[RMDB]
Conditions: 150 mM KOAc, 10 mM MgCl2 and 150 mM bicine (pH 8.5), 24 C. This 207-nucleotide RNA was probed chemically with 2A3. 2A3 adducts were read by reverse transcription with SuperScript II with manganese.
RNA sequence: GGGAACGACUCGAGUAGAGUCGAAAAGGGGUCAACGCUCCCCACCUCCAAAGUAAGCGAAGAACUAAUACUGAAGCCUCCACGGUAUUAGGGAGCUUACUAAGGAGAGGCGUUGACGGAGGCACCCAAAAGUUGCGCAGUGUUCGCACUGCGCAACGGCAACAGUGUUGUUCGCAACACUGUUGCCAAAAGAAACAACAACAACAAC
Reactivity to 2A3 in 0.01 (KOAc 150mM, MgCl2 10mM, bicine 150mM(pH8.5), 24C), signal-to-noise 1, nucleotides 027 to 156: g010g000g060g000u000c000a000a000c000g020c000u080c030c070c020c000a030c000c000u040c000c000a040a050a020g010u000a000a010g000c040g240a240a000g000a010a000c000u000a000a000u010a010c000u030g070a300a030g010c000c000u020c000c000a000c010g010g030u010a000u000u000a010g010g000g000a000g010c000u000u000a000c000u000a000a060g000g000a010g000a000g000g000c000g010u000u000g010a000c000g000g000a010g000g010c000a040c010c010c000a000a190a050a020g000u000u000g000c000g000c000a000g000u010g080u050u150c210g070c110a000c010u000g000c000g000c000a000a000c020